RNA sequence: GGGAACGACUCGAGUAGAGUCGAAAAGAUAUGGAGGGUGACUUGCAGUUCGUUUGACGUCGGAAACGACCGAGAACUGAACUACAAGUGCACCCUCCUAAGUCAAACCCACCCUUCGGGGUGGGAACGACAAUGUGACGUUCGCGUCACAUUGUCGAAAAGAAACAACAACAACAAC
Reactivity to DMS in 0.01 (KOAc 150mM, MgCl2 10mM, bicine 150mM(pH8.5), 24C), signal-to-noise 1, nucleotides 027 to 126: g020a040u000a300u000g010g010a020g000g000g020u000g010a060c000u010u000g000c030a000g000u000u000c010g000u000u000u000g000a300c300g000u010c000g000g010a070a110a150c000g000a000c010c010g000a300g000a000a000c000u030g010a000a020c010u000a030c010a010a000g000u000g000c010a010c000c000c000u000c000c000u000a000a070g010u000c010a110a120a160c000c000c000a000c010c010c000u010u000c090g010g000g000g010u000g010g000g000a000a030
Chemical mapping of a 177-nucleotide RNA with DMS. Source: RMDB library TTRDEL, as collected in RNAgym. The RNA was probed in 150 mM KOAc, 10 mM MgCl2 and 150 mM bicine (pH 8.5) at 24 C.